Record summary: An RNA of 177 nucleotides, treated with 2A3 and DMS and read out base by base. 2A3 adducts were read by reverse transcription with SuperScript II with manganese. For DMS, 723 sequencing reads were counted. Values cover nucleotides 27 to 126. Conditions: 150 mM KOAc, 10 mM MgCl2 and 150 mM bicine (pH 8.5), 24 C.
RNA sequence: GGGAACGACUCGAGUAGAGUCGAAAAUAUGACCGAAUUAAUCUAAACUCAGAGAGAUAAGGUAAUGACACAGAGGUUGUACUCACUUUGACGAUGAUUAACCAUCAUUGAGGAGAACCAAAGUAACGGUAGCUACAGGGUUCGCCCUGUAGCUACCAAAAGAAACAACAACAACAAC
Reactivity to 2A3 in 0.01 (KOAc 150mM, MgCl2 10mM, bicine 150mM(pH8.5), 24C), signal-to-noise 2, nucleotides 027 to 126: u280a070u090g030a020c040c040g050a000a000u010u030a060a000u060c050u120a070a180a200c030u050c130a000g020a010g040a000g000a070u010a050a020g010g040u020a090a030u170g060a000c030a010c070a040g070a080g010g070u020u010g040u100a040c000u000c040a060c080u090u010u130g170a050c060g000a000u030g000a030u170u010a100a050c100c000a020u010c000a000u000u030g000a030g040g020a020g050a000a000c000c000a010a030a000g000u000a010a010c090
Reactivity to DMS in 0.01 (KOAc 150mM, MgCl2 10mM, bicine 150mM(pH8.5), 24C), signal-to-noise 1, nucleotides 027 to 126: u000a020u000g000a020c000c000g000a300a080u000u000a020a030u020c030u000a000a080a180c130u000c180a030g000a100g000a300g000a050u000a000a090g000g000u110a000a000u000g000a300c000a030c030a130g000a300g000g000u000u000g000u000a170c030u040c000a010c050u000u050u000g000a060c300g040a190u000g000a030u000u000a030a130c300c220a150u000c000a100u100u000g000a070g020g000a260g020a050a000c080c000a100a150a010g000u000a080a000c300